[RMDB]
The record gives the reactivity of an RNA of 177 nucleotides to DMS and 2A3.
RNA sequence: GGGAACGACUCGAGUAGAGUCGAAAACAUGAGCCUAUCUCCGAACGAAGAGCACGCGUGGGGAAGGAUCAGCGCCCGAGAGGGGAAAAUGGCAAAGAGCGGAGGAACGUUGAGAGGAUGUCUCCCACUUACCUAGUUAGUUCGCUAACUAGGUAAGAAAAGAAACAACAACAACAAC
Reactivity to DMS in 0.01 (KOAc 150mM, MgCl2 10mM, bicine 150mM(pH8.5), 24C), signal-to-noise 5, nucleotides 027 to 126: c110a110u010g010a060g020c010c020u000a140u000c020u000c020c040g020a140a090c080g000a090a090g010a110g010c080a060c070g010c090g010u010g000g000g000g000a060a030g000g000a040u010c020a070g000c130g000c020c010c030g010a080g010a120g000g010g000g000a020a030a060a050u010g010g000c080a040a060a100g000a080g010c080g000g000a090g010g000a050a060c090g020u000u000g010a070g000a070g010g000a060u000g010u010c070u000c000c010c030a250
Reactivity to 2A3 in 0.01 (KOAc 150mM, MgCl2 10mM, bicine 150mM(pH8.5), 24C), signal-to-noise 4, nucleotides 027 to 126: c020a080u110g020a010g030c010c010u110a250u080c020u020c010c020g070a100a050c020g030a110a070g030a030g130c040a020c090g060c010g040u050g000g000g010g010a010a020g000g000a020u050c020a020g030c010g100c070c010c010g100a090g000a030g000g030g000g050a030a070a000a060u130g040g000c040a070a060a020g040a030g010c050g020g020a030g030g040a040a060c050g040u080u100g070a080g010a010g120g020a030u050g040u000c020u010c030c000c010a060
2A3 adducts were read by reverse transcription with SuperScript II with manganese.